[RMDB]
RNA sequence: GGGAACGACUCGAGUAGAGUCGAAAAGUCUCUGUCUCUCAGAGUGAGAGAGUCAGAGUCAGUCUCACUGUCAGUGUCUCAGUGAGACACAGUGAGACAGUCAGACUCAGUCUGUCUCACACAGUGAAUACUCGGUCGCAUUCGUGCGACCGAGUAUAAAAGAAACAACAACAACAAC
Reactivity to DMS in 0.01 (KOAc 150mM, MgCl2 10mM, bicine 150mM(pH8.5), 24C), signal-to-noise 2, nucleotides 027 to 126: g010u000c000u000c000u000g000u000c010u000c000u000c010a100g020a250g010u010g010a060g000a000g000a020g000u080c010a020g000a010g010u010c020a080g000u000c070u010c010a010c000u000g010u000c300a120g010u000g010u000c040u000c000a230g030u010g000a010g000a000c000a010c070a180g010u000g000a010g000a000c000a000g000u010c040a080g000a180c260u010c180a060g000u000c020u000g000u000c000u000c000a000c030a150c050a010g000u010g010a120
Reactivity to 2A3 in 0.01 (KOAc 150mM, MgCl2 10mM, bicine 150mM(pH8.5), 24C), signal-to-noise 2, nucleotides 027 to 126: g020u020c000u010c010u020g010u000c000u000c000u000c030a120g150a170g300u220g120a080g090a000g000a010g060u030c000a010g000a000g000u010c010a010g010u020c000u010c010a000c000u040g040u090c060a110g110u040g100u130c040u000c010a220g150u100g130a000g000a000c000a000c000a030g000u000g010a000g010a000c000a000g010u000c020a020g120a190c020u030c160a010g030u030c020u010g020u000c000u000c000a020c000a010c000a000g050u040g090a030